This 177-nucleotide RNA was probed chemically with DMS and 2A3. Source: RMDB library OK2TRN, as collected in RNAgym.
RNA sequence: GGGAACGACUCGAGUAGAGUCGAAAAGAAAGGCAGCCACUGCAGCCCACGUAGCCAUUCGAUGCAUGCUUUUGCAUGCCGCCCACGACUGAGGGCAGCUGCGGCACUGAGGGCAGCUGCCGAAAGAACGGGCUAAUAGUUUCGACUAUUAGCCCGUAAAAGAAACAACAACAACAAC
Reactivity to DMS in 0.01 (KOAc 150mM, MgCl2 10mM, bicine 150mM(pH8.5), 24C), signal-to-noise 3, nucleotides 027 to 126: g000a110a090a140g020g000c020a070g030c000c090a150c070u010g030c060a070g020c070c070c050a130c080g010u000a040g040c010c040a160u000u010c210g000a100u000g000c010a020u010g000c010u000u000u000u000g010c010a010u000g000c000c070g010c010c000c030a110c100g010a120c170u010g000a170g000g010g010c020a050g030c000u010g030c040g000g020c300a070c090u000g000a110g030g010g020c030a090g030c020u000g030c000c000g000a010a050a120g010a140
Reactivity to 2A3 in 0.01 (KOAc 150mM, MgCl2 10mM, bicine 150mM(pH8.5), 24C), signal-to-noise 2, nucleotides 027 to 126: g090a010a110a010g000g020c010a000g060c040c070a110c070u110g040c040a070g010c000c050c000a020c010g000u030a020g000c010c030a070u090u190c110g100a130u190g000c020a010u000g020c020u120u180u170u300g000c000a000u010g000c000c030g010c000c020c020a040c060g290a060c090u180g040a230g000g050g000c000a010g020c000u020g000c010g060g030c110a040c130u090g040a120g000g030g000c020a000g020c010u000g000c000c000g020a020a000a000g020a020
Conditions: 150 mM KOAc, 10 mM MgCl2 and 150 mM bicine (pH 8.5), 24 C. For DMS the reverse transcriptase was MarathonRT. Reactivities are rounded to 0.1 and cut off at 0 and 3.